[RMDB]
RNA sequence: GGGAACGACUCGAGUAGAGUCGAAAAAAGAUGCCCAAGGUUUGAAAAAGUUCUACAAAGAAGUUAGAGCUUACCUAGGAAUCUCUUCUGCUUGUGACGGUCUUGCUUCAGCUUAUAGGGCGAAUUCAACCACAUCGGUUCGCCGAUGUGAAAAGAAACAACAACAACAAC
Reactivity to 2A3 in 0.01 (KOAc 150mM, MgCl2 10mM, bicine 150mM(pH8.5), 24C), signal-to-noise 9, nucleotides 027 to 129: a000a010g090a050u060g030c000c000c010a010a020g060g000u050u140u250g080a050a030a000a000a000g010u020u000c000u000a020c040a050a200a040g170a130a030g090u110u080a010g000a010g000c010u010u010a020c010c000u010a040g030g040a030a040u030c030u000c000u100u010c010u020g070c030u070u070g060u060g030a040c050g000g040u010c000u010u060g030c010u040u050c030a040g000c010u090u100a100u120a180g060g010g010c010g010a020a030u110u060c010a030a030c050
Reactivity to DMS in 0.01 (KOAc 150mM, MgCl2 10mM, bicine 150mM(pH8.5), 24C), signal-to-noise 8, nucleotides 027 to 129: a070a050g020a090u030g000c070c010c010a110a040g000g050u010u010u010g030a030a020a020a040a000g060u000u000c000u000a070c030a080a050a110g060a110a030g040u060u020a050g020a040g030c040u000u000a000c000c000u000a100g010g010a200a020u020c030u010c040u010u010c000u020g020c030u010u010g010u030g000a100c160g000g000u030c040u030u020g030c120u010u010c060a060g030c060u010u020a110u000a070g020g010g000c010g030a050a090u070u050c120a020a070c170